[RMDB]
RNA sequence: GGGAACGACUCGAGUAGAGUCGAAAAUGUCUCUAUGCAUGCCGGAUCGACAUUAGCAAUUACUAAUCCAGAGAAAGCAAAAGGUAUUGUGUAUACACCAGAACAAUUGCCAGCGAAAAGUAAAUGGAUAUGCGGCAGAAUUCGUUCUGCCGCAUAUAAAAGAAACAACAACAACAAC
Reactivity to 2A3 in 0.01 (KOAc 150mM, MgCl2 10mM, bicine 150mM(pH8.5), 24C), signal-to-noise 2, nucleotides 027 to 126: u110g010u000c000u000c000u040a040u220g060c040a030u150g020c070c000g070g010a020u010c010g030a000c000a030u000u110a010g090c060a010a050u110u030a190c070u110a040a040u060c040c090a060g030a020g000a110a000a000g000c000a000a010a040a180g060g000u070a080u020u060g070u020g110u070a080u020a190c040a070c090c000a050g050a040a020c000a000a070u040u000g000c030c010a020g030c030g030a050a030a100a000g110u120a000a180a140u070g070g000
Reactivity to DMS in 0.01 (KOAc 150mM, MgCl2 10mM, bicine 150mM(pH8.5), 24C), signal-to-noise 2, nucleotides 027 to 126: u000g020u000c000u000c020u000a140u030g000c050a120u000g000c000c090g050g020a210u010c040g010a090c190a110u000u010a050g000c040a000a040u000u040a110c100u000a020a110u000c090c020a150g040a140g000a110a210a050g000c020a040a010a220a090g010g000u020a030u000u000g000u000g020u000a090u020a060c080a010c100c110a070g000a080a170c100a060a050u020u070g040c090c000a110g000c010g000a070a040a070a040g070u000a050a070a080u020g000g010